[RMDB]
About this RNA
An RNA of 177 nucleotides, treated with 2A3 and read out base by base.
RNA sequence: GGGAACGACUCGAGUAGAGUCGAAAAAGCGACUGACCGAUUACGAUCGGUCAGUCGCAAAGUCGUGAACUGGGGGGACAUUUCCAGUCUCCCCCUCCAGAUCCGGCGCAAUACCACAGAAGGAGAAGGAACACCCAAAUUUCGAUUUGGGUGUUCCAAAAGAAACAACAACAACAAC
Reactivity to 2A3 in 0.01 (KOAc 150mM, MgCl2 10mM, bicine 150mM(pH8.5), 24C), signal-to-noise 1, nucleotides 027 to 126: a000g030c000g000a000c000u000g020a000c000c000g160a000u090u090a240c300g010a000u020c090g010g000u000c000a000g080u000c000g000c000a000a000a000g000u000c000g060u100g140a060a020c030u000g030g000g000g030g000g030a000c010a050u160u260u050c100c080a060g090u020c020u050c010c000c000c000c000u060c000c000a000g000a020u010c020c000g010g000c000g000c000a030a130u170a300c010c000a060c060a090g090a230a010g020g230a040g000a150a100

Background
For 2A3, 359 sequencing reads were counted. For 2A3 the reverse transcriptase was SuperScript II with manganese. The reactions ran in a buffer of 150 mM KOAc, 10 mM MgCl2 and 150 mM bicine (pH 8.5), at 24 C.